[RMDB]
RNA sequence: GGGAACGACUCGAGUAGAGUCGAAAAUCCAUAAUGAUGUCAAUUACCUAACUGAUUACUAUUUUCGAUCUAUUUUUGAGAGAUUUUUGGUUACUUUAAAGAUGUGCUCGAUUGCGAGGCAUUUGUCCUUGAUCUUAUGGUUCGCCAUAAGAUCAAGAAAAGAAACAACAACAACAAC
Reactivity to DMS in 0.01 (KOAc 150mM, MgCl2 10mM, bicine 150mM(pH8.5), 24C), signal-to-noise 3, nucleotides 027 to 126: u000c050c030a140u020a070a060u000g000a080u000g010u000c060a050a090u000u010a080c180c100u000a060a070c060u000g000a070u000u000a060c110u030a060u000u000u000u000c020g000a110u000c060u000a040u000u000u010u000u010g000a030g000a140g010a140u000u000u000u000u000g020g010u000u000a050c080u020u010u000a070a100a070g000a010u000g020u000g010c010u000c000g020a300u000u000g020c030g000a010g010g010c010a030u000u000u000g000u000c130
Reactivity to 2A3 in 0.01 (KOAc 150mM, MgCl2 10mM, bicine 150mM(pH8.5), 24C), signal-to-noise 4, nucleotides 027 to 126: u020c020c000a010u150a080a100u120g060a020u060g040u060c030a020a070u080u030a140c000c010u050a040a070c020u040g040a080u030u090a040c030u040a080u010u090u000u030c010g020a010u000c000u040a090u070u190u050u160u100g030a030g010a010g000a000u020u010u020u050u120g070g040u050u040a060c010u120u090u120a110a200a020g010a010u000g010u080g220c000u010c010g140a160u080u300g190c060g010a010g010g000c000a010u000u010u070g070u040c010